Description:
Chemical mapping of a 177-nucleotide RNA with DMS. High DMS reactivity at an A or C suggests that its Watson-Crick edge is free. Reactivities are given for positions 27 through 126. The data come from the RNA Mapping Database (RMDB), library 15KREP.
RNA sequence: GGGAACGACUCGAGUAGAGUCGAAAAGCCAGUUGGUGUUGUAGACACUGAGUGGGGUAACAUGUUAACGGGCAUUGCUGCACGUCCUCCACCAGGUGAACAGUUUAAGCACCUCGUGCCUCUUAUGCUAGUGCAGUACGUUCGCGUACUGCACUAGAAAAGAAACAACAACAACAAC
Reactivity to DMS in 0.01 (KOAc 150mM, MgCl2 10mM, bicine 150mM(pH8.5), 24C), signal-to-noise 1, nucleotides 027 to 126: g020c000c010a200g020u000u010g000g020u000g020u010u030g000u010a110g000a040c030a080c010u000g020a170g010u020g000g020g000g000u000a130a100c170a100u000g010u000u030a100a030c020g000g020g000c090a090u000u000g050c160u000g000c010a010c050g030u000c080c000u010c020c000a030c030c070a060g000g010u040g000a070a100c210a120g030u000u000u000a170a150g000c020a030c050c080u040c110g000u000g010c040c060u000c040u000u000a040u000g000